[RMDB]
RNA sequence: GGGAACGACUCGAGUAGAGUCGAAAACAGUGCAGCUGAGAUCAGACUUUGUGUGUAACUCCACUAGCCUACCAGGGUGCCUCUCAUAAAGCUAAGAAAUGUAAAUUUGGCCUAAUAUACAAAGUUGACCAUCUUACGAGUUCGCUCGUAAGAUGGUAAAAGAAACAACAACAACAAC
Reactivity to DMS in 0.01 (KOAc 150mM, MgCl2 10mM, bicine 150mM(pH8.5), 24C), signal-to-noise 2, nucleotides 027 to 126: c060a080g000u010g020c040a040g000c060u000g010a180g000a060u000c090a070g010a030c040u000u020u010g030u000g020u000g020u000a080a140c070u000c100c020a030c090u000a060g010c010c000u020a140c140c100a050g000g020g060u000g020c070c040u000c010u000c060a060u010a060a090a200g000c050u000a030a050g010a030a090a040u000g030u000a050a040a100u010u000u010g010g010c030c020u010a030a040u000a050u000a040c090a050a030a080g010u010u010g000
Reactivity to 2A3 in 0.01 (KOAc 150mM, MgCl2 10mM, bicine 150mM(pH8.5), 24C), signal-to-noise 1, nucleotides 027 to 126: c060a010g040u070g080c030a030g030c020u050g020a040g010a180u090c040a040g020a100c000u030u160u080g010u030g010u050g050u080a070a050c020u010c030c010a030c040u020a020g010c000c000u070a090c040c000a030g000g000g030u040g050c000c000u050c020u030c000a030u080a100a140a030g000c010u030a030a000g110a140a080a040u110g020u110a110a080a140u020u020u030g020g000c000c030u050a130a090u130a000u030a100c020a030a070a050g030u070u040g070
Record summary:
Conditions: 150 mM KOAc, 10 mM MgCl2 and 150 mM bicine (pH 8.5), 24 C. The record gives the reactivity of an RNA of 177 nucleotides to DMS and 2A3. 2A3 adducts were read by reverse transcription with SuperScript II with manganese. It was measured as part of the RMDB library OK2TST. 2A3 is a SHAPE reagent: it acylates the 2'-hydroxyl of flexible nucleotides of all four kinds.